[RMDB]
RNA sequence: GGGAACGACUCGAGUAGAGUCGAAAAGAGGGGGGCACUAACCGAUAGUCAGCCAAACUGGAGUUUUGCUCCCCUGAAUAAGGGGGUAGAGGGCAUCGAUAGCGUCGCGGCUGCGGCUGAUGGCGUCCCACAAUCUCAUGUUCGCAUGAGAUUGUGGAAAAGAAACAACAACAACAAC
Reactivity to 2A3 in 0.01 (KOAc 150mM, MgCl2 10mM, bicine 150mM(pH8.5), 24C), signal-to-noise 1, nucleotides 027 to 126: g160a020g000g000g010g000g020g030c010a000c030u010a020a010c010c010g020a030u020a020g050u030c090a040g070c080c020a110a090a010c030u040g040g020a160g030u000u030u020u040g020c000u010c000c000c020c000u000g000a000a010u140a070a030g030g000g000g000g000u050a020g040a060g010g010g000c000a010u050c050g050a050u050a080g040c020g000u000c000g000c000g050g000c040u040g030c060g120g000c000u020g020a090u040g030g000c010g020u110c020
Reactivity to DMS in 0.01 (KOAc 150mM, MgCl2 10mM, bicine 150mM(pH8.5), 24C), signal-to-noise 3, nucleotides 027 to 126: g010a050g000g000g010g000g000g000c010a020c220u000a030a020c010c010g000a300u010a030g010u000c070a090g010c140c190a050a160a060c030u010g010g000a150g010u000u000u000u000g000c020u000c010c000c000c000u000g000a030a030u010a060a080g020g010g010g010g020u000a050g000a080g010g020g000c040a030u010c100g000a080u000a090g000c050g000u000c050g010c060g010g040c060u000g020c150g030g010c040u010g010a060u010g020g010c020g000u000c100
This 177-nucleotide RNA was probed chemically with 2A3 and DMS. It was measured as part of the RMDB library OK2TRN. For DMS the reverse transcriptase was MarathonRT.